[RMDB]
RNA sequence: GGGAACGACUCGAGUAGAGUCGAAAAGAGGACUGGGCCAUCUCCAGACACAUCAGCAGCGUGCCUGGCAUCUGGGGCAUUGGCACGGUGCUGGGUGUGGCCAUCCAGCAGAGGCUUGUCCCUGGCCUCGGACGCUAUCAUUCGUGAUAGCGUCCGAAAAAGAAACAACAACAACAAC
Reactivity to DMS in 0.01 (KOAc 150mM, MgCl2 10mM, bicine 150mM(pH8.5), 24C), signal-to-noise 1, nucleotides 027 to 126: g000a080g040g000a050c150u000g000g020g030c010c020a130u010c030u000c060c050a060g000a110c040a010c020a020u010c000a000g000c040a010g010c020g040u010g000c000c000u000g010g020c100a060u010c150u010g050g040g030g020c050a110u000u000g000g010c000a010c010g000g000u000g000c010u010g000g010g030u000g000u010g020g010c070c040a090u010c070c060a090g000c180a160g010a060g000g000c020u000u010g000u010c010c010c020u000g010g000c000c000
Reactivity to 2A3 in 0.01 (KOAc 150mM, MgCl2 10mM, bicine 150mM(pH8.5), 24C), signal-to-noise 1, nucleotides 027 to 126: g150a100g050g020a030c070u130g070g030g030c030c000a120u040c050u080c040c030a000g020a060c020a000c000a140u050c000a010g080c000a000g130c000g000u000g030c000c000u040g030g000c010a110u100c160u220g000g000g260g000c110a140u110u040g060g030c000a000c000g050g100u000g000c000u010g010g010g000u060g010u030g000g000c010c000a050u060c020c010a010g040c030a010g020a000g100g000c000u070u060g050u050c020c000c010u020g000g000c020c010

The data come from the RNA Mapping Database (RMDB), library OK2TRN. Chemical mapping of a 177-nucleotide RNA with DMS and 2A3. The DMS profile rests on 1,435 reads. For 2A3 the reverse transcriptase was SuperScript II with manganese. Reactivities are given for positions 27 through 126.